[RMDB]
RNA sequence: GGGAACGACUCGAGUAGAGUCGAAAACUUGAUGGCGAUAAAUCUUACCCCGAGCCGGAUUUUUUGGGCGUAUUCGAGAAACGGCACACACAGAUCCGCCGCGCCUACCACCCACAAGUGGUAGAGGAGCGCAUGGCCUUUUCGAAGGCCAUGCGCUAAAAGAAACAACAACAACAAC
Reactivity to 2A3 in 0.01 (KOAc 150mM, MgCl2 10mM, bicine 150mM(pH8.5), 24C), signal-to-noise 1, nucleotides 027 to 126: c040u060u140g000a000u060g200g040c110g060a090u080a010a180a070u000c030u000u140a150c000c010c020c000g000a000g000c000c010g050g070a120u060u070u000u030u070u170g190g000g000c140g030u120a050u060u250c100g130a070g080a020a020a020c020g000g000c030a040c000a000c000a000c000a180g060a060u010c110c040g010c000c000g000c000g070c070c010u000a000c000c000a010c020c110c000a130c030a280a090g000u000g010g000u050a040g030a070g020g020
Conditions: 150 mM KOAc, 10 mM MgCl2 and 150 mM bicine (pH 8.5), 24 C. This 177-nucleotide RNA was probed chemically with 2A3. Values are in units of 0.01, from 0 to 300, in steps of 10. It was measured as part of the RMDB library OK1LIB. For 2A3 the reverse transcriptase was SuperScript II with manganese.